[RMDB]
RNA sequence: GGGAACGACUCGAGUAGAGUCGAAAAUAUGAAACUGAGCUCCAGUCUCAGCCAAUCACUUAGCUUCCCAUAACAAGUCUAACUGGCUCAGAAGAGCUAGCUGUGCCGCAAUAAAACCACAUGGAGGACCCCUUUGAUAGUUCGCUAUCAAAGGGGUAAAAGAAACAACAACAACAAC
Reactivity to DMS in 0.01 (KOAc 150mM, MgCl2 10mM, bicine 150mM(pH8.5), 24C), signal-to-noise 3, nucleotides 027 to 126: u060a100u000g000a050a120a200c060u000g010a030g010c040u040c150c150a070g010u040c020u000c010a020g010c080c060a110a050u010c010a040c130u010u010a080g020c180u010u000c000c000c000a100u030a080a110c150a100a110g000u020c040u000a080a180c050u020g020g000c040u010c020a130g020a040a110g000a040g000c000u010a010g000c030u000g010u010g010c020c030g000c100a050a050u030a050a040a060a090c060c080a080c090a040u010g010g000a060g020g020
Reactivity to 2A3 in 0.01 (KOAc 150mM, MgCl2 10mM, bicine 150mM(pH8.5), 24C), signal-to-noise 4, nucleotides 027 to 126: u300a060u060g020a000a040a020c010u010g000a000g010c040u070c090c030a040g180u080c010u000c010a010g040c060c000a030a060u090c010a000c080u070u110a020g070c000u050u030c000c000c010a010u020a050a030c110a040a000g050u010c040u060a080a000c000u050g000g000c010u010c040a190g030a300a000g000a110g000c010u020a000g000c020u020g050u100g050c000c060g030c050a010a060u160a170a080a040a020c010c000a020c020a070u170g080g030a020g000g010
Chemical mapping of a 177-nucleotide RNA with DMS and 2A3. The 2A3 profile rests on 2,529 reads. The RNA was probed in 150 mM KOAc, 10 mM MgCl2 and 150 mM bicine (pH 8.5) at 24 C.